[RMDB]
RNA sequence: GGGAACGACUCGAGUAGAGUCGAAAAGUAAUAAACUGAAAGAGCUAGUAUCUUUGAGGUUUCCACAUUGCCAACUCCCGAAAAUGUGGAGAAGGGUGAAGUUUCUAAUAUAAAAGUAACAAGAAUGUCAUGGAGUAGAAACAUAAAGUACUCAAGAACCACUACCACCUUUCGAGGUGGUGGUGGUAAAAGAAACAACAACAACAAC
Reactivity to DMS in 0.01 (KOAc 150mM, MgCl2 10mM, bicine 150mM(pH8.5), 24C), signal-to-noise 1, nucleotides 027 to 156: g000u030a060a140u000a040a150a140c030u020g000a060a010a090g080a050g060c060u000a190g030u000a130u000c030u000u030u000g000a050g070g000u000u000u000c000c000a050c030a040u010u060g000c000c010a050a220c130u000c030c000c000g000a040a070a060a010u010g010u030g000g000a120g020a100a220g000g050g020u000g020a080a230g000u000u000u000c020u010a020a050u010a120u000a160a100a030a160g000u000a060a130c050a060a150g000a090a130u000g020u000c010a030u000g000g030a120g000u000a100g010a200a070a060c010a080u020a020a040a160g050u000a020c000u000c000a030a100g000a120
Reactivity to 2A3 in 0.01 (KOAc 150mM, MgCl2 10mM, bicine 150mM(pH8.5), 24C), signal-to-noise 1, nucleotides 027 to 156: g010u010a000a250u100a070a180a020c010u050g100a080a120a020g070a050g060c070u090a020g060u090a120u080c050u010u090u100g040a090g000g000u030u020u030c000c000a010c000a000u010u020g080c020c000a110a070c120u050c020c000c000g000a010a120a000a000u020g000u020g010g010a010g030a010a000g020g020g010u020g040a060a020g010u060u150u050c020u010a060a060u040a080u090a270a080a010a020g060u110a000a070c020a010a030g220a060a070u040g010u170c020a050u150g030g000a010g000u070a020g010a120a120a000c030a010u130a040a110a000g060u010a000c000u000c030a020a020g020a070